[RMDB]
RNA sequence: GGGAACGACUCGAGUAGAGUCGAAAAGACACGACGGAGACGUCGUGUCAAAGAGUGGGAAACCACUCAAAGAGCCACAGCUUCGGCUGUGGCUCAAGGCGCGGGACCUUCCGCGGAACAAGGGGAAGGUAAUGGAAAAUUUCGAUUUUCCAUUACCAAAAGAAACAACAACAACAAC
Reactivity to 2A3 in 0.01 (KOAc 150mM, MgCl2 10mM, bicine 150mM(pH8.5), 24C), signal-to-noise 1, nucleotides 027 to 126: g000a000c000a000c020g000a000c010g010g020a050g040a060c000g020u000c000g000u010g000u000c010a010a010a000g000a000g000u010g000g000g000a010a060a090c000c000a000c000u010c000a030a040a000g020a000g010c000c000a000c000a010g030c010u090u140c300g120g030c010u010g000u010g000g000c000u000c000a000a010g010g000c010g000c000g050g000g060a190c000c000u110u060c010c000g000c020g020g030a030a010c030a060a050g020g010g000g000a010a120
Reactivity to DMS in 0.01 (KOAc 150mM, MgCl2 10mM, bicine 150mM(pH8.5), 24C), signal-to-noise 3, nucleotides 027 to 126: g000a010c000a010c000g010a010c020g010g000a280g000a230c000g020u000c000g010u000g000u000c010a020a050a070g000a010g020u000g000g010g000a160a120a210c000c000a000c000u000c000a040a090a070g010a020g030c000c030a010c020a040g020c000u010u010c270g010g060c000u000g050u000g020g010c000u000c000a010a040g010g000c050g020c030g000g000g000a130c120c110u000u000c000c000g010c000g000g000a050a070c090a050a080g000g000g000g020a200a170